[RMDB]
RNA sequence: GGGAACGACUCGAGUAGAGUCGAAAAGGCUACCAAUUGGUCUGAGUUCUUGAACCAAAUAGACAAGUAUGGACUAGACGAUGAAGAUUUGGUGAUUGGUCUCAAAGGAAAAGAGAGAGAAUUGAAACUUCCACUAUUACUUCGGUAAUAGUGGAAGAAAAGAAACAACAACAACAAC
Reactivity to DMS in 0.01 (KOAc 150mM, MgCl2 10mM, bicine 150mM(pH8.5), 24C), signal-to-noise 5, nucleotides 027 to 126: g010g010c040u000a090c040c030a070a110u010u000g020g010u010c020u000g010a170g020u010u000c020u000u010g010a140a110c040c050a030a050a120u000a090g010a120c170a060a100g010u000a080u010g010g010a110c070u000a050g020a060c060g000a100u000g010a100a130g000a080u000u000u000g000g010u000g010a150u010u010g000g000u000c040u000c050a060a070a120g010g010a050a030a050a070g010a100g010a060g010a070g000a040a090u000u000g010a110a090a110
Reactivity to 2A3 in 0.01 (KOAc 150mM, MgCl2 10mM, bicine 150mM(pH8.5), 24C), signal-to-noise 3, nucleotides 027 to 126: g020g020c010u020a010c020c020a040a120u060u070g110g010u060c020u050g070a060g030u070u030c010u060u060g050a070a050c040c020a000a090a120u120a040g140a040c030a110a010g090u020a070u150g060g030a050c030u040a050g010a030c030g020a060u100g060a030a090g040a100u050u090u080g010g010u020g030a070u040u080g070g020u000c010u000c030a090a160a040g090g030a060a110a100a000g070a000g000a000g020a020g040a060a120u090u120g050a120a080a030